Structure probing data (2A3 and DMS) for a 177-nucleotide construct. For DMS, 16,549 sequencing reads were counted. For DMS the reverse transcriptase was MarathonRT. The data come from the RNA Mapping Database (RMDB), library TTRDES.

RNA sequence: GGGAACGACUCGAGUAGAGUCGAAAAGAUAUGGAUGGCUAGAGGACAUGACUACAGUCGGAAACGACUGUUAGUCAACAGCCUUCAGCCAUCCUAAGUCAAACUGAAUCAGUUCGCUGAUUCAGAACAUAGCUAUUUGGUUCGCCAAAUAGCUAUGAAAAGAAACAACAACAACAAC
Reactivity to 2A3 in 0.01 (KOAc 150mM, MgCl2 10mM, bicine 150mM(pH8.5), 24C), signal-to-noise 6, nucleotides 027 to 126: g010a010u030a010u080g000g000a010u010g000g010c010u040a050g010a020g040g010a090c100a300u220g010a000c000u010a010c000a010g000u000c010g010g010a060a020a000c000g000a000c000u010g010u070u040a000g000u000c000a020a000c040a040g090c000c000u000u020c010a000g000c010c000a000u000c000c000u000a000a000g000u000c030a060a070a140c010u000g000a000a000u000c000a010g090u110u170c300g040c160u010g000a000u020u000c000a000g000a060a010
Reactivity to DMS in 0.01 (KOAc 150mM, MgCl2 10mM, bicine 150mM(pH8.5), 24C), signal-to-noise 8, nucleotides 027 to 126: g010a030u000a230u010g010g010a000u000g010g010c000u000a060g020a010g010g000a100c120a210u000g010a020c000u000a010c000a010g020u000c000g000g000a070a060a120c000g010a020c000u000g000u010u000a000g010u000c000a040a090c300a140g010c000c010u000u000c060a010g010c000c000a000u000c000c010u000a010a070g000u000c030a130a120a250c020u000g000a010a000u000c000a000g010u000u010c300g030c000u000g010a010u000u000c000a000g000a090a190
Conditions: 150 mM KOAc, 10 mM MgCl2 and 150 mM bicine (pH 8.5), 24 C.
Values are in units of 0.01, from 0 to 300, in steps of 10.
For 2A3 the reverse transcriptase was SuperScript II with manganese.